[RMDB]
RNA sequence: GGGAACGACUCGAGUAGAGUCGAAAAGAUAUGGAAUUCUCCGGAUGGCAACAGCUCGGAAACGAGACAUGCCAGAAGGAGAGAUUCCUAAGUCAAAGCCAGGGACUGGUUCGCCAGUCCCUGGCAACAAUCAAAGUUAGUUCGCUAACUUUGAUUGAAAAGAAACAACAACAACAAC
Reactivity to 2A3 in 0.01 (KOAc 150mM, MgCl2 10mM, bicine 150mM(pH8.5), 24C), signal-to-noise 2, nucleotides 027 to 126: g020a010u130a050u200g010g000a000a020u030u000c010u000c010c030g020g030a030u010g010g000c000a060a030c060a300g040c000u000c010g010g050a050a060a050c000g000a000g030a050c050a060u090g000c000c000a010g010a010a000g000g000a000g010a000g000a000u000u000c000c000u010a130a000g030u020c020a100a080a050g010c020c000a010g040g000g000a000c000u020g010g010u090u110c140g000c070c010a000g010u000c000c030c000u010g010g010c000a000a000
Reactivity to DMS in 0.01 (KOAc 150mM, MgCl2 10mM, bicine 150mM(pH8.5), 24C), signal-to-noise 6, nucleotides 027 to 126: g010a040u010a300u010g000g010a010a010u000u000c000u010c010c000g010g020a300u000g010g010c000a020a070c180a140g010c010u000c010g000g000a090a080a190c000g000a020g000a040c080a150u000g010c000c000a020g010a300a190g000g000a000g000a030g000a010u000u000c000c000u010a050a140g010u000c050a100a120a170g010c000c010a000g000g000g010a020c000u000g000g000u000u000c220g020c000c000a010g010u000c010c000c010u000g000g010c010a010a020
This 177-nucleotide RNA was probed chemically with 2A3 and DMS. As a SHAPE reagent, 2A3 marks flexible, mostly unpaired nucleotides at the ribose 2'-OH. For 2A3, 5,353 sequencing reads were counted. Conditions: 150 mM KOAc, 10 mM MgCl2 and 150 mM bicine (pH 8.5), 24 C. The DMS profile rests on 6,940 reads.